[RMDB]
Source: RMDB library TTRDEL, as collected in RNAgym. Chemical mapping of a 177-nucleotide RNA with DMS and 2A3.

RNA sequence: GGGAACGACUCGAGUAGAGUCGAAAAGAUAUGGAUCUGACCAGACAUGAUCGUCGGAAACGACCGGAUCAACAGCUGGCAGAUCCUAAGUCAAACACGACGUAUAUCUUCGGAUAUACGUCGUGAACAGAGCAGGAUAGUUCGCUAUCCUGCUCUGAAAAGAAACAACAACAACAAC
Reactivity to DMS in 0.01 (KOAc 150mM, MgCl2 10mM, bicine 150mM(pH8.5), 24C), signal-to-noise 3, nucleotides 027 to 126: g010a050u010a300u000g000g000a000u010c000u000g000a210c000c000a000g030a120c100a210u000g000a030u000c010g000u000c020g020g010a090a070a150c040g040a000c130c300g040g040a000u000c010a030a080c260a180g010c010u000g000g000c030a000g010a010u000c000c000u010a020a080g000u000c030a130a130a210c010a020c000g000a020c000g000u000a000u000a010u000c000u010u010c200g000g020a000u000a000u000a000c000g010u000c000g020u030g010a070a110
Reactivity to 2A3 in 0.01 (KOAc 150mM, MgCl2 10mM, bicine 150mM(pH8.5), 24C), signal-to-noise 2, nucleotides 027 to 126: g000a000u030a020u090g000g000a000u000c010u020g180a300c000c010a050g120a190c060a090u090g000a000u000c010g090u000c010g010g100a090a050a030c040g060a070c090c190g220g020a000u000c010a010a130c120a020g090c010u010g000g010c000a010g000a000u000c000c010u000a010a010g000u020c020a000a140a040c010a010c010g010a000c010g020u020a000u000a000u040c010u080u090c250g100g020a000u010a000u000a010c060g000u000c010g000u000g000a000a000
DMS adducts were read by reverse transcription with MarathonRT. Conditions: 150 mM KOAc, 10 mM MgCl2 and 150 mM bicine (pH 8.5), 24 C. The 2A3 profile rests on 3,473 reads. The DMS profile rests on 2,038 reads.